[RMDB]
RNA sequence: GGGAACGACUCGAGUAGAGUCGAAAACUUGGCAUUGGGCGAAGUCCGUCACAUGAUGCACCUCGGUGAGAUAGCCCGGUACGUCGCAGUUGGGGAACGAGCAGCCGCGGUCCUUGGCGUAGAGGACGACACUGACGAUGUUCGCAUCGUCAGUGUCAAAAGAAACAACAACAACAAC
Reactivity to 2A3 in 0.01 (KOAc 150mM, MgCl2 10mM, bicine 150mM(pH8.5), 24C), signal-to-noise 1, nucleotides 027 to 126: c020u010u070g050g040c000a070u020u160g040g000g030c010g010a020a020g070u040c060c000g130u090c040a050c000a030u170g020a070u080g020c010a000c000c040u010c020g000g050u070g010a050g030a090u100a020g040c030c000c030g000g020u100a020c020g000u000c010g000c060a050g000u110u080g030g050g000g030a050a010c060g020a030g000c030a010g000c040c070g000c020g040g000u000c000c020u040u040g060g000c090g050u060a010g020a000g100g000a040c030
Reactivity to DMS in 0.01 (KOAc 150mM, MgCl2 10mM, bicine 150mM(pH8.5), 24C), signal-to-noise 1, nucleotides 027 to 126: c030u010u010g000g030c050a110u000u000g010g010g020c020g020a040a150g010u010c060c050g010u020c020a090c090a120u010g030a040u000g000c130a020c060c040u000c050g030g030u020g000a070g000a180u000a130g010c050c030c100g020g010u010a060c120g000u000c010g000c090a080g020u000u000g000g000g000g000a070a060c060g000a060g000c040a100g020c110c060g000c070g000g010u000c010c020u010u000g000g000c090g030u000a080g010a050g030g020a060c050